Record summary:
The record gives the reactivity of an RNA of 207 nucleotides to DMS and 2A3. For DMS the reverse transcriptase was MarathonRT. Values cover nucleotides 27 to 156. It was measured as part of the RMDB library OK3TST.
[RMDB]
RNA sequence: GGGAACGACUCGAGUAGAGUCGAAAAGUUAGAGAAAUAAGAUUUAUAUGCCCAGAACAGCUAGAAGACAAUACAAGGCUGGUAUUUAGUGGCGAACUAUACAGCUGGGUGCAAUGUCAGUCCGGCCAAGGAGUGAGCACCACGGUCUGGAGUUUACCACUUUUACAGAAUUCGUUCUGUAAAAGUGAAAAGAAACAACAACAACAAC
Reactivity to DMS in 0.01 (KOAc 150mM, MgCl2 10mM, bicine 150mM(pH8.5), 24C), signal-to-noise 3, nucleotides 027 to 156: g000u000u000a070g010a150g000a080a100a130u000a080a150g010a240u000u000u010a110u000a130u030g010c030c030c020a170g000a100a100c060a120g010c030u000a090g000a080a140g010a120c070a110a150u010a090c100a090a240g000g020c010u010g010g010u000a030u000u000u000a070g050u010g030g040c050g020a040a040c030u000a140u010a110c040a060g020c020u000g000g010g010u000g040c060a060a070u000g020u020c050a090g000u010c010c000g010g000c070c100a070a110g020g000a090g000u000g000a110g000c040a050c010c010a090c080g020g010u000c030u000g000g010a090g010u010u000u010a060c030
Reactivity to 2A3 in 0.01 (KOAc 150mM, MgCl2 10mM, bicine 150mM(pH8.5), 24C), signal-to-noise 4, nucleotides 027 to 156: g030u070u090a060g020a020g060a070a100a080u150a150a030g000a060u060u190u060a200u050a050u180g010c000c020c010a000g030a050a030c020a000g000c020u100a040g070a150a010g090a160c070a110a070u140a110c060a100a040g030g000c000u000g010g020u020a120u050u150u090a070g010u060g050g020c030g020a010a010c030u030a040u050a230c010a010g020c020u030g000g010g000u010g010c040a060a090u150g060u110c030a030g080u040c020c010g040g040c050c010a060a050g000g000a010g020u070g010a020g010c010a020c030c020a050c040g010g030u070c040u040g020g010a030g020u040u060u060a090c040